[RMDB]
RNA sequence: GGGAACGACUCGAGUAGAGUCGAAAAAAGAUUCUGGGGCAGAAUGCUGGCGGUUCCCAGAACUGUGAGUAUUGCUGAUGUCUCCUUUUACAGAUCAAUAACACGACUAACAUGGUCUAAUGAGUAAGAGGACUAAUUAUUUCGAUAAUUAGUCCUCAAAAGAAACAACAACAACAAC
Reactivity to DMS in 0.01 (KOAc 150mM, MgCl2 10mM, bicine 150mM(pH8.5), 24C), signal-to-noise 4, nucleotides 027 to 126: a040a030g010a130u010u000c020u000g000g000g000g020c050a030g000a030a040u020g010c040u000g010g010c040g000g010u010u020c000c060c100a150g010a010a030c010u000g010u000g010a090g010u010a040u010u010g010c040u020g000a110u010g000u000c020u000c020c010u010u000u010u000a100c180a020g000a050u000c060a070a080u030a050a100c150a080c160g000a060c060u000a070a160c220a110u020g000g000u010c010u000a070a090u030g000a090g000u030a080a120
Reactivity to 2A3 in 0.01 (KOAc 150mM, MgCl2 10mM, bicine 150mM(pH8.5), 24C), signal-to-noise 6, nucleotides 027 to 126: a000a010g110a050u080u000c020u030g000g000g020g010c010a010g030a190a030u080g040c020u030g030g000c010g030g000u080u090c080c050c020a010g020a020a010c010u020g030u020g100a030g030u030a020u020u090g080c020u030g020a050u100g040u020c050u090c020c000u070u120u070u090a080c050a010g040a070u050c020a040a050u070a080a030c040a010c110g080a030c050u130a190a040c070a170u140g020g000u000c010u050a100a130u160g050a030g100u040a140a020
An RNA of 177 nucleotides, treated with DMS and 2A3 and read out base by base. It was measured as part of the RMDB library OK1LIB. Reactivities are rounded to 0.1 and cut off at 0 and 3.